[RMDB]
RNA sequence: GGGAACGACUCGAGUAGAGUCGAAAAUUCAAUCCCGGUGGAUCCCGCGCGGCGUCUAUCCUGUGAACACGCCCAGGGCUGGAAGGCAGCAAGCGUCAACGGGCUCUGUCGGGUGCGCGGGAGUAAACUUAAUGGAACGAUUCGUCGUUCCAUUAAGAAAAGAAACAACAACAACAAC
Reactivity to DMS in 0.01 (KOAc 150mM, MgCl2 10mM, bicine 150mM(pH8.5), 24C), signal-to-noise 4, nucleotides 027 to 126: u000u010c150a130a190u000c000c000c010g010g030u020g010g000a150u000c010c010c000g010c010g030c030g020g000c010g000u000c020u030a020u000c010c000u000g000u010g010a100a100c300a030c030g010c000c010c010a300g000g000g000c000u000g020g020a100a100g010g000c010a020g000c020a160a190g000c070g010u000c090a150a050c040g000g010g000c020u000c030u000g000u000c010g010g000g030u000g010c010g030c000g010g000g000a010g000u000a100a110a170
Reactivity to 2A3 in 0.01 (KOAc 150mM, MgCl2 10mM, bicine 150mM(pH8.5), 24C), signal-to-noise 1, nucleotides 027 to 126: u130u010c040a000a080u020c000c000c040g020g070u070g100g040a050u020c000c000c000g020c000g010c000g030g070c000g000u000c040u190a270u300c000c020u030g000u030g060a110a020c030a000c120g000c030c020c010a020g000g020g020c000u010g050g030a090a070g010g000c020a010g030c020a020a000g010c000g020u020c010a060a040c000g010g030g020c000u040c010u040g010u010c020g020g010g000u000g010c000g000c000g000g000g000a010g010u020a020a000a000